Source information:
This 177-nucleotide RNA was probed chemically with 2A3 and DMS. In probing experiments dimethyl sulfate is read out at A N1 and C N3, which are open when not base-paired. Source: RMDB libraries RFM100 and RFMREP, as collected in RNAgym. 2A3 adducts were read by reverse transcription with SuperScript II with manganese.
[RMDB]
RNA sequence: GGGAACGACUCGAGUAGAGUCGAAAACUCCCUGUAUGCCACUCGCGUAGCUGCCAAACUCAGUUGAAACAACUGCCUUCUCCCGGCGAGAUUCAGGCAUUGUGUUCGUACGUUUGGCUCUACUGCGAGGCCAUCAUAUUUUCGAAUAUGAUGGCCUAAAAGAAACAACAACAACAAC
Reactivity to 2A3 in 0.01 (KOAc 150mM, MgCl2 10mM, bicine 150mM(pH8.5), 24C), signal-to-noise 5, nucleotides 027 to 126: c010u040c000c010c010u040g070u060a130u200g080c040c040a040c010u000c020g000c010g010u000a000g020c140u020g000c010c010a020a020a000c020u080c120a060g020u040u090g060a020a000a000c000a000a020c170u020g000c000c000u020u000c000u030c000c020c020g250g000c200g000a010g010a000u200u210c070a010g000g000c010a020u010u010g010u010g070u050u020c040g070u120a050c020g010u000u000u000g020g000c000u000c000u000a000c010u010g010c000g010
Reactivity to DMS in 0.01 (KOAc 150mM, MgCl2 10mM, bicine 150mM(pH8.5), 24C), signal-to-noise 4, nucleotides 027 to 126: c200u000c000c000c000u020g010u030a030u010g010c060c120a190c030u010c000g030c010g010u000a010g040c190u010g000c000c000a010a010a020c010u000c220a180g000u000u020g000a040a050a010c000a010a020c180u000g010c000c010u000u010c000u000c010c030c180g020g000c190g020a010g010a020u070u030c210a010g000g000c010a020u010u010g000u000g010u000u010c030g010u020a110c200g000u000u000u000g000g000c000u020c000u000a010c010u030g020c010g000